[RMDB]
RNA sequence: GGGAACGACUCGAGUAGAGUCGAAAAGAUAUGGAGUCGACGGUAAUACCAUAUGGUCGGAAACGACCACAUGGUGCCAGUCGUCUCCUAAGUCAAACUAAGCUAAGCCUUCGGGCUUAGCUUAGAACUUCUGAUAACAGUUCGCUGUUAUCAGAAGAAAAGAAACAACAACAACAAC
Reactivity to 2A3 in 0.01 (KOAc 150mM, MgCl2 10mM, bicine 150mM(pH8.5), 24C), signal-to-noise 3, nucleotides 027 to 126: g000a000u020a000u050g000g000a010g010u000c000g000a010c020g000g030u190a300a270u160a300c000c000a000u000a010u010g010g000u000c000g000g000a010a000a000c000g000a000c000c000a000c000a000u010g000g000u010g000c000c000a020g000u000c000g010u000c000u010c000c000u000a000a000g010u000c000a030a060a110c010u000a000a000g000c010u000a010a000g000c020c020u050u200c300g030g000g000c000u000u000a000g000c000u000u000a000g000a000a010
Reactivity to DMS in 0.01 (KOAc 150mM, MgCl2 10mM, bicine 150mM(pH8.5), 24C), signal-to-noise 4, nucleotides 027 to 126: g000a010u000a010u000g000g000a030g020u000c000g000a020c000g000g010u000a090a060u010a010c000c000a010u000a010u010g000g000u000c000g010g010a000a010a020c000g010a010c010c000a000c020a000u000g000g020u000g010c010c000a120g030u000c000g010u000c000u000c000c000u000a000a050g000u000c000a160a120a300c010u000a000a000g010c000u000a010a000g000c000c000u000u020c220g030g010g020c000u000u000a000g010c000u000u000a000g010a090a180